An RNA of 177 nucleotides, treated with 2A3 and DMS and read out base by base. Source: RMDB library TTRDES, as collected in RNAgym. The DMS profile rests on 5,500 reads.

RNA sequence: GGGAACGACUCGAGUAGAGUCGAAAAGAUAUGGAUCGAUAAUAUCAACAGCUGGUCCCUCGGAAACGAGGGCCAGACAUGAUAGAAUCGAUCCUAAGUCAAAGAGGCAUGCGUUCGCGCAUGCCUCGAAAAGAUAUUACUUCGGUAAUAUCUUUUCAAAAGAAACAACAACAACAAC
Reactivity to 2A3 in 0.01 (KOAc 150mM, MgCl2 10mM, bicine 150mM(pH8.5), 24C), signal-to-noise 3, nucleotides 027 to 126: g030a020u060a020u110g000g000a000u000c000g010a000u040a120a040u020a100u010c080a100a190c060a200g040c000u020g040g040u300c030c000c000u000c000g000g020a050a040a010c000g010a000g000g020g000c000c010a000g000a000c000a130u300g000a000u000a010g030a050a030u000c010g000a000u000c000c000u000a010a010g010u000c030a150a120a210g000a000g020g030c020a000u010g010c000g060u050u180c300g030c020g000c250a000u020g000c020c000u000c000
Reactivity to DMS in 0.01 (KOAc 150mM, MgCl2 10mM, bicine 150mM(pH8.5), 24C), signal-to-noise 5, nucleotides 027 to 126: g000a040u020a300u000g020g010a000u000c000g010a010u000a040a290u000a010u000c010a060a130c280a220g000c000u000g000g000u030c020c000c000u000c000g000g010a100a060a150c000g000a020g020g000g010c000c000a000g000a020c100a210u000g000a010u000a010g000a300a040u000c000g000a000u000c000c010u000a000a080g010u010c020a140a100a190g000a010g000g010c000a000u000g000c020g020u000u010c280g030c020g000c000a010u000g010c000c000u000c000